[RMDB]
RNA sequence: GGGAACGACUCGAGUAGAGUCGAAAAAAAAAAGAUAUGGAGGAACAUAUGUCAGACGAGACGUUGUUCGGAAACGAACAACGCUCGCUGACAUCACCCCCUCCCCAAUCCUCCUAAGUCAAAAAAAGUUAUUUCGUUAGUUCGCUAACGAAAUAACAAAAGAAACAACAACAACAAC
Reactivity to DMS in 0.01 (KOAc 150mM, MgCl2 10mM, bicine 150mM(pH8.5), 24C), signal-to-noise 1, nucleotides 027 to 126: a000a000a060a140a160a070g000a060u010a300u010g000g010a000g000g000a200a090c110a080u020a000u000g000u000c000a000g000a210c020g000a000g040a040c000g020u000u000g050u000u000c000g000g000a090a040a110c000g010a030a000c000a020a000c020g030c000u000c010g020c000u000g000a000c000a010u000c280a150c120c060c000c010c050u010c010c010c000c080a040a110u000c020c000u000c010c010u000a020a150g010u000c060a000a020a110a110a080a110a170
This 177-nucleotide RNA was probed chemically with DMS. Reactivities are given for positions 27 through 126. DMS adducts were read by reverse transcription with MarathonRT. For DMS, 958 sequencing reads were counted. The reactions ran in a buffer of 150 mM KOAc, 10 mM MgCl2 and 150 mM bicine (pH 8.5), at 24 C.